Source information: Structure probing data (2A3 and DMS) for a 177-nucleotide construct.
[RMDB]
RNA sequence: GGGAACGACUCGAGUAGAGUCGAAAAAUUGAUGCGAAGGGGGGACGGAGAAGGCUAUGUUGGCCGGGCGACGGUUGUCCCGGUUUAAGCGUGUAGGCUGGUUUUCCAGGCAAAUCCGGAAUUUGAAGUAAUAUACAGUGUUCGCACUGUAUAUUACAAAAGAAACAACAACAACAAC
Reactivity to 2A3 in 0.01 (KOAc 150mM, MgCl2 10mM, bicine 150mM(pH8.5), 24C), signal-to-noise 2, nucleotides 027 to 126: a000u070u080g010a000u100g010c040g040a030a040g000g000g000g000g000g000a000c030g020g000a040g020a050a020g040g000c000u070a050u170g050u050u070g100g000c010c000g000g000g010c040g010a150c090g110g000u130u120g040u130c000c000c000g020g000u030u030u040a040a010g020c040g010u020g040u080a020g060g010c010u000g000g000u030u110u090u020c010c000a000g060g000c020a040a040a070u020c020c010g050g080a090a080u130u070u100g040a110a040
Reactivity to DMS in 0.01 (KOAc 150mM, MgCl2 10mM, bicine 150mM(pH8.5), 24C), signal-to-noise 7, nucleotides 027 to 126: a100u000u000g000a070u000g010c050g010a080a090g020g000g000g000g000g010a080c090g000g000a070g010a100a080g010g010c040u000a050u000g020u000u000g010g000c010c010g020g010g020c300g020a070c140g010g010u010u010g010u010c010c000c010g010g000u000u000u010a050a060g020c040g010u000g010u010a070g010g010c020u000g010g000u000u000u010u010c010c020a120g010g000c080a030a050a100u010c020c020g000g010a070a090u010u010u000g000a090a150

The data come from the RNA Mapping Database (RMDB), library M2PK90. The RNA was probed in 150 mM KOAc, 10 mM MgCl2 and 150 mM bicine (pH 8.5) at 24 C.